RNA sequence: GGGAACGACUCGAGUAGAGUCGAAAAAUGGAUUAUAUCCAGACUUGACGAUUUAUUUAAAUGUUAGUGCUGAAGUAGGUCGCGAACGUAUUAUUAAAAAUUCAAGAGAUCAAAAUAGAUUAGAUCAUAGCUGUUAAAGCUUCGGCUUUAACAGCUAAAAAGAAACAACAACAACAAC
Reactivity to DMS in 0.01 (KOAc 150mM, MgCl2 10mM, bicine 150mM(pH8.5), 24C), signal-to-noise 1, nucleotides 027 to 126: a080u000g070g000a050u000u100a110u030a300u000c000c000a060g000a240c060u010u000g000a030c120g000a050u000u000u050a050u020u000u000a000a020a040u050g000u000u020a010g040u000g010c050u010g000a000a140g040u050a060g000g000u040c050g000c010g010a010a010c040g010u010a040u080u000a120u000u010a000a000a010a010a140u000u070c010a010a040g000a170g000a060u010c030a010a050a020a300u030a260g030a050u000u070a200g000a060u010c000a170
Reactivity to 2A3 in 0.01 (KOAc 150mM, MgCl2 10mM, bicine 150mM(pH8.5), 24C), signal-to-noise 1, nucleotides 027 to 126: a000u000g000g000a070u000u000a140u060a000u300c000c000a000g000a120c140u060u060g000a000c000g130a120u110u100u000a140u030u140u100a090a210a000u120g000u000u020a040g000u040g070c060u060g000a250a250g040u140a000g050g050u140c040g000c000g000a000a040c020g000u000a100u300u000a000u040u280a000a000a000a000a300u010u020c000a000a000g040a000g060a000u020c100a300a000a000a000u100a130g060a060u140u000a080g000a120u000c000a000